[RMDB]
RNA sequence: GGGAACGACUCGAGUAGAGUCGAAAAACUUAAGGAAAGUGAUCAAGUUUAUCUGUUUCUUAAAUAAUAGUGCCGACGGAACUUGGAAUUUACUAGUGAGAAAUAGGAAGCGUAGUUUACAUAUUCUGCCAUUUUUUUUCUUUCAUGUGAAUUUGAACUUGUAAAGAUGGUUCGCCAUCUUUACAAGAAAAGAAACAACAACAACAAC
Reactivity to 2A3 in 0.01 (KOAc 150mM, MgCl2 10mM, bicine 150mM(pH8.5), 24C), signal-to-noise 1, nucleotides 027 to 156: a000c070u090u070a050a020g090g000a070a000a070g000u090g070a100u050c120a050a050g000u100u070u000a140u110c070u000g070u070u040u000c030u050u160a060a100a100u130a090a170u210a210g070u050g030c020c020g030a030c030g150g000a020a080c000u060u040g050g080a050a050u020u020u000a000c030u000a090g100u020g110a060g110a000a150a060u060a010g010g110a020a020g000c010g020u030a070g000u030u030u050a030c000a020u100a080u120u000c070u030g060c000c040a030u070u120u000u000u000u140u150u160c030u070u100u060c060a080u070g040u020g020a020a100u110u130u110g050a080a060